[RMDB]
RNA sequence: GGGAACGACUCGAGUAGAGUCGAAAAUGGCUCUUGAGGAGCUACCGGACGCCCUUCAGACAAUAGUUUUGAUUGCACUAUUGAGUGUGAUGUCCUUAGGUGUGUUUUUUCUACUCAUGCAAAGGAACAAAUAGAUGUUCUUCGGAACAUCUAUUUGAAAAGAAACAACAACAACAAC
Reactivity to DMS in 0.01 (KOAc 150mM, MgCl2 10mM, bicine 150mM(pH8.5), 24C), signal-to-noise 9, nucleotides 027 to 126: u010g010g010c000u000c010u000u010g020a160g020g000a050g010c010u000a040c070c050g010g010a060c070g010c020c020c020u000u000c080a070g010a110c040a060a080u000a070g000u000u010u010u000g010a120u000u000g010c090a030c000u000a150u000u010g010a070g030u000g020u000g010a050u000g000u000c010c010u000u000a070g010g020u000g020u000g010u000u000u000u010u010u000c060u010a050c030u000c010a100u010g010c130a050a070a090g010g000a080a200
Reactivity to 2A3 in 0.01 (KOAc 150mM, MgCl2 10mM, bicine 150mM(pH8.5), 24C), signal-to-noise 5, nucleotides 027 to 126: u060g020g000c010u000c010u070u180g230a160g040g040a000g050c010u020a040c010c050g050g030a030c030g000c010c010c000u040u060c030a040g020a100c020a060a110u080a150g040u030u050u090u190g110a090u050u120g010c040a010c020u050a090u160u240g110a080g030u050g020u020g030a050u050g020u020c000c000u020u050a060g000g030u040g000u000g060u040u060u000u030u060u040c040u040a030c010u000c010a020u090g040c030a080a050a050g040g030a070a050
Chemical mapping of a 177-nucleotide RNA with DMS and 2A3. Reactivities are given for positions 27 through 126. The RNA was probed in 150 mM KOAc, 10 mM MgCl2 and 150 mM bicine (pH 8.5) at 24 C. Source: RMDB library OK2TST, as collected in RNAgym. The DMS profile rests on 21,957 reads. DMS adducts were read by reverse transcription with MarathonRT. 2A3 adducts were read by reverse transcription with SuperScript II with manganese.